RNA sequence: GGGAACGACUCGAGUAGAGUCGAAAAGCUGGCUGGGGCUCAGUUUCCUCAUCUUAAAAGGAAACUGUUAGGCUCACUGUAUAAGUUUGAUGACCUUCUUUGCUCCAAAACUCUACAAUGCAAAGAAUAGAAAAUGAGAAUGAGAUAGAAGAAAGCACAUUAGUCAUCGAUUCGUCGAUGACUAAUGAAAAGAAACAACAACAACAAC
Reactivity to DMS in 0.01 (KOAc 150mM, MgCl2 10mM, bicine 150mM(pH8.5), 24C), signal-to-noise 2, nucleotides 027 to 156: g010c030u000g010g010c010u000g020g030g010g060c040u010c030a030g020u000u010u000c000c000u000c040a300u000c230u000u000a070a140a110a020g000g010a050a010a020c000u000g010u000u000a060g030g020c020u000c030a080c040u000g050u000a180u000a030a110g040u000u010u000g030a130u000g020a110c060c030u000u000c040u000u000u000g010c010u000c040c070a080a050a070a130c050u000c070u000a090c060a090a210u000g000c040a050a030a040g000a030a080u000a080g000a020a030a090a050u000g010a120g010a030a060u010g010a090g030a110u000a110g000a020a090g010a030a050a070g020c040a140
Reactivity to 2A3 in 0.01 (KOAc 150mM, MgCl2 10mM, bicine 150mM(pH8.5), 24C), signal-to-noise 3, nucleotides 027 to 156: g020c060u040g100g020c030u000g000g000g020g000c000u010c040a020g000u020u000u000c010c000u020c060a230u070c090u210u250a050a090a010a000g000g000a010a010a000c010u020g020u030u080a030g020g000c010u010c020a070c040u020g050u050a090u060a270a070g040u020u090u130g090a080u080g040a070c010c000u000u010c010u020u020u050g020c010u080c060c000a050a050a070a150c050u070c010u040a080c060a080a090u090g020c000a040a020a060g000a030a050u110a120g130a020a110a030a040u150g010a040g030a120a080u120g010a070g020a080u090a070g050a060a020g050a050a060a030g050c060a010

The record gives the reactivity of an RNA of 207 nucleotides to DMS and 2A3. The RNA was probed in 150 mM KOAc, 10 mM MgCl2 and 150 mM bicine (pH 8.5) at 24 C. Source: RMDB library OK3TST, as collected in RNAgym. DMS adducts were read by reverse transcription with MarathonRT. For 2A3 the reverse transcriptase was SuperScript II with manganese.